[RMDB]
RNA sequence: GGGAACGACUCGAGUAGAGUCGAAAAGCCACCGACCGUCAUCUCCAGUCAUGAAACCUUUGAAACAUUCUACAUUGUUCCUCUUUGCAUUCUUGAUUGGCUUGCUUUUCACACAAAGUGCAUUAGGAUGUUGAGUUACUUUCGAGUAACUCAACAUAAAAGAAACAACAACAACAAC
Reactivity to DMS in 0.01 (KOAc 150mM, MgCl2 10mM, bicine 150mM(pH8.5), 24C), signal-to-noise 5, nucleotides 027 to 126: g000c030c020a100c080c050g020a080c050c050g000u010c050a070u000c040u000c030c030a090g010u010c030a050u010g000a080a110a080c090c040u000u010u000g010a110a060a070c060a060u000u000c060u000a060c100a100u000u000g000u000u000c020c000u000c080u000u000u000g010c070a040u000u000c080u010u010g010a100u000u000g000g010c080u000u000g010c040u000u000u010u000c050a090c120a060c080a030a030a060g030u010g010c030a050u010u000a100g000g000
Reactivity to 2A3 in 0.01 (KOAc 150mM, MgCl2 10mM, bicine 150mM(pH8.5), 24C), signal-to-noise 3, nucleotides 027 to 126: g030c010c010a030c020c040g050a020c010c020g020u040c010a060u020c010u020c020c020a030g000u030c010a030u060g060a060a060a070c010c010u010u100u090g130a090a080a010c030a040u070u060c030u090a060c010a100u010u130g020u050u020c020c020u040c030u050u080u050g030c010a050u000u060c020u060u090g070a100u050u010g040g000c030u030u030g050c010u070u070u080u090c070a070c000a000c010a090a080a020g000u010g000c010a070u060u040a050g110g050

Source: RMDB library OK2TST, as collected in RNAgym. Chemical mapping of a 177-nucleotide RNA with DMS and 2A3. The RNA was probed in 150 mM KOAc, 10 mM MgCl2 and 150 mM bicine (pH 8.5) at 24 C. DMS (dimethyl sulfate) methylates the pairing face of unpaired adenines and cytosines. Reactivities are given for positions 27 through 126.